[RMDB]
Chemical mapping of a 155-nucleotide RNA with 2A3. It was measured as part of the RMDB library P90LIB.
RNA sequence: GGGAACGACUCGAGUAGAGUCGAAAAAUGGCGAACCUUGGCUGCUGGAUGCUGGUUCUCUUUGUGGCCACAUGGAGUGACCUGGGCAAAAAUAAAAAUAAAAAUAAAAAUAAUAAAAGCACCGUUCGCGGUGUUAAAAGAAACAACAACAACAAC
Reactivity to 2A3 in 0.01 (KOAc 150mM, MgCl2 10mM, bicine 150mM(pH8.5), 24C), signal-to-noise 1, nucleotides 027 to 135: a010u050g100g010c010g010a080a000c030c010u030u040g040g010c040u040g000c010u030g050g000a060u040g010c060u020g020g030u130u030c030u010c000u020u050u090g110u050g020g020c000c000a020c010a070u130g050g000a020g020u200g010a020c000c020u000g000g000g060c020a030a010a060a030a000u100a030a080a050a060a010u300a060a120a040a000a000u300a030a130a170a050a020u300a160a040u200a080a220a030a000g030c000a000c050c000g070u080u060c200g010c020g060g000u010g010u000u010a160